[RMDB]
RNA sequence: GGGAACGACUCGAGUAGAGUCGAAAACGACGGCCGAACGAGUAAGGGUUCCUCAGCAAUGCUGAUCAGCUGAGGGUUAGCCGGUCCUAAGUCUGCCCGUAAGUCGAAGCAGACAACAGGGAAACAGCCUUCAUACCAUGUUCGCAUGGUAUGAAGGAAAAGAAACAACAACAACAAC
Reactivity to 2A3 in 0.01 (KOAc 150mM, MgCl2 10mM, bicine 150mM(pH8.5), 24C), signal-to-noise 2, nucleotides 027 to 126: c060g030a010c000g060g000c010c020g070a030a030c070g000a050g120u170a040a130g110g010g000u060u120c000c000u000c000a000g000c020a070a130u290g020c080u200g120a120u120c030a020g000c000u000g020a000g000g000g000u030u100a000g010c040c000g010g010u070c010c000u040a060a020g000u000c000u000g000c020c000c020g010u130a140a030g150u090c040g000a050a010g020c000a010g050a000c010a020a050c080a050g000g020g050a000a050a140c030a030g050
Reactivity to DMS in 0.01 (KOAc 150mM, MgCl2 10mM, bicine 150mM(pH8.5), 24C), signal-to-noise 2, nucleotides 027 to 126: c100g030a170c090g010g040c030c050g000a110a070c040g010a130g010u010a130a130g000g010g000u000u000c000c000u000c020a010g010c000a070a060u000g000c060u000g000a170u000c110a140g000c020u020g010a020g030g000g000u000u000a110g000c000c000g020g000u000c000c010u020a070a260g000u000c000u000g000c010c040c050g000u010a070a120g010u000c060g000a190a190g000c030a000g000a040c000a070a040c130a030g000g020g000a030a060a080c120a090g000